[RMDB]
RNA sequence: GGGAACGACUCGAGUAGAGUCGAAAAGAUAUGGAGUACUCGAUUCACCAUUCACAACUACCCACCAAGGCACUCGGAAACGAGUGGCUUGAGGUUGUGAAUGGUGACAGGAUUGUACUCCUAAGUCCCUCACAUUAUCGUUCGCGAUAAUGUGAGGAAAAGAAACAACAACAACAAC
Reactivity to DMS in 0.01 (KOAc 150mM, MgCl2 10mM, bicine 150mM(pH8.5), 24C), signal-to-noise 2, nucleotides 027 to 126: g040a060u000a300u020g010g000a050g000u000a000c000u000c080g010a300u020u000c020a040c030c000a030u010u000c010a000c010a000a000c000u000a090c100c050c090a300c150c010a020a000g000g000c000a000c000u000c000g000g010a140a190a210c000g020a010g000u010g000g010c000u000u000g000a070g020g000u010u000g000u000g000a010a000u000g000g010u000g000a000c300a100g000g010a160u000u000g030u000a000c020u000c000c000u000a060a110g000u000c030
Reactivity to 2A3 in 0.01 (KOAc 150mM, MgCl2 10mM, bicine 150mM(pH8.5), 24C), signal-to-noise 2, nucleotides 027 to 126: g040a010u200a120u260g020g010a000g000u000a010c010u020c100g150a260u170u040c040a010c020c010a000u000u010c010a010c010a020a010c000u120a130c050c160c100a070c030c010a020a030g160g090c000a010c010u010c000g080g000a080a120a060c060g040a010g020u010g000g000c000u000u010g000a020g030g000u000u010g040u000g000a000a020u000g000g030u000g000a000c010a020g020g070a120u200u210g000u000a000c010u000c000c000u010a090a020g100u020c020